RNA sequence: GGGAACGACUCGAGUAGAGUCGAAAAAUCCCCAGACCUCCCUUCUCCACACUCCUUCCCCCCUGCGGGGCCCCCCCAUAAGAUGGCGAGAUCUCCACUCAUUGGGUCCUUCGUCCAUCUCCUUUUCCUCGCGGAGUGUUCGCACUCCGCAAAAGAAACAACAACAACAAC
Reactivity to DMS in 0.01 (KOAc 150mM, MgCl2 10mM, bicine 150mM(pH8.5), 24C), signal-to-noise 3, nucleotides 027 to 129: a120u010c060c000c010c140a070g000a070c100c000u000c050c000c000u000u010c050u000c010c090a100c190a080c110u030c010c030u000u040c060c030c010c000c010c000u020g030c070g000g000g000g000c020c010c010c050c040c030c060a150u050a000a000g030a070u030g020g050c040g060a070g010a000u070c060u070c000c000a130c270u060c160a080u060u040g010g060g040u000c040c050u010u030c000g030u040c080c000a040u030c030u030c060c100u010u000u010u000c030c020u020c230
Reactivity to 2A3 in 0.01 (KOAc 150mM, MgCl2 10mM, bicine 150mM(pH8.5), 24C), signal-to-noise 1, nucleotides 027 to 129: a000u000c010c000c000c000a000g030a060c000c000u000c000c000c030u000u000c000u000c000c020a010c000a010c040u080c000c000u020u100c000c000c000c000c000c000u060g010c120g000g000g020g000c000c000c000c000c000c000c000a040u100a050a010g010a030u080g000g000c040g010a020g000a030u070c120u040c050c000a050c080u090c020a070u040u120g060g000g000u010c000c080u060u010c020g090u000c010c000a000u000c010u020c000c000u050u040u070u070c010c000u000c020
An RNA of 170 nucleotides, treated with DMS and 2A3 and read out base by base. For DMS, 8,657 sequencing reads were counted. For 2A3 the reverse transcriptase was SuperScript II with manganese. DMS (dimethyl sulfate) methylates the pairing face of unpaired adenines and cytosines. Reactivities are given for positions 27 through 129. The data come from the RNA Mapping Database (RMDB), library 15KLIB.